[RMDB]
Notes
Structure probing data (2A3 and DMS) for a 177-nucleotide construct. Conditions: 150 mM KOAc, 10 mM MgCl2 and 150 mM bicine (pH 8.5), 24 C. Reactivities are given for positions 27 through 126. For DMS the reverse transcriptase was MarathonRT. 2A3 adducts were read by reverse transcription with SuperScript II with manganese.
RNA sequence: GGGAACGACUCGAGUAGAGUCGAAAAGAUAUGGACUUACCGAGCAACGGAAGAGACUCGGAAACGAGUCUACUUCUUGCGUUUGACGUAAGUCCUAAGUCAAAAGUUUGCUGUUCGCAGCAAACAACGGUGUAUAUGACUUCGGUCAUAUACACCGAAAAGAAACAACAACAACAAC
Reactivity to 2A3 in 0.01 (KOAc 150mM, MgCl2 10mM, bicine 150mM(pH8.5), 24C), signal-to-noise 3, nucleotides 027 to 126: g030a010u070a050u180g000g000a000c000u000u010a000c020c030g000a010g020c020a040a050c080g040g010a000a010g000a000g000a010c000u010c000g000g000a060a020a010c020g010a010g010u000c000u060a300c010u010u000c000u020u020g020c020g040u000u050u140g090a080c070g000u010a020a000g000u000c000c000u000a040a010g030u020c030a020a000a000a270g000u000u010u000g010c020u020g020u090u100c300g030c120a020g000c000a000a010a000c000a000a020
Reactivity to DMS in 0.01 (KOAc 150mM, MgCl2 10mM, bicine 150mM(pH8.5), 24C), signal-to-noise 4, nucleotides 027 to 126: g010a050u020a300u000g000g010a030c000u000u000a020c010c010g000a080g020c030a050a300c210g000g010a020a010g000a090g010a010c000u010c000g000g000a040a080a120c000g010a010g020u000c000u000a040c010u000u010c000u000u000g000c300g010u000u000u020g030a230c290g010u000a010a010g000u000c000c000u000a020a070g000u000c010a090a080a060a070g010u000u000u000g010c010u000g010u000u000c220g030c000a010g020c000a010a010a010c010a070a140